[RMDB]
RNA sequence: GGGAACGACUCGAGUAGAGUCGAAAAUUAGUGCAUGGAGCUCGGACAUGGCUUUUUAUGGUAGAGCUGCAGAGUUUGAUAGCUACAGUGACUGUAGCUAUCAAAUCCUAAGGUAUUUUUUAGUCCCCUUGCCUGGCUCCUGACCAAUAGCCAAACACACGUAAUAUAGUUUCGACUAUAUUACGUGAAAAGAAACAACAACAACAAC
Reactivity to DMS in 0.01 (KOAc 150mM, MgCl2 10mM, bicine 150mM(pH8.5), 24C), signal-to-noise 3, nucleotides 027 to 156: u000u010a040g030u010g010c070a100u000g010g010a060g020c010u000c050g100g040a070c030a060u000g010g020c070u010u000u000u010u020a050u020g020g030u000a110g010a110g050c020u000g010c300a060g000a020g020u000u000u000g000a040u000a020g020c000u000a010c000a050g030u000g000a210c160u010g040u000a010g010c000u000a010u000c000a010a010a010u000c010c010u010a120a210g030g020u000a000u000u000u000u000u000u000a170g000u000c010c000c020c030u000u000g020c020c030u000g010g020c000u000c010c020u000g010a150c040c010a050a110u000a090g020c020c010a060a080a060c070a220
Reactivity to 2A3 in 0.01 (KOAc 150mM, MgCl2 10mM, bicine 150mM(pH8.5), 24C), signal-to-noise 7, nucleotides 027 to 156: u080u050a030g040u030g130c030a040u100g060g040a020g010c020u030c060g030g050a060c050a060u050g050g020c070u070u110u070u120u180a130u120g050g020u090a030g000a030g040c010u030g010c040a000g000a010g040u020u000u000g000a000u000a000g000c000u000a000c000a030g060u080g300a070c080u010g010u000a000g000c000u000a000u010c000a000a000a000u010c000c010u040a050a030g040g020u050a120u050u100u020u020u040u120a060g050u100c020c000c000c000u030u050g010c000c010u010g000g000c000u000c000c020u030g030a040c010c000a030a060u030a050g040c010c020a040a060a030c110a010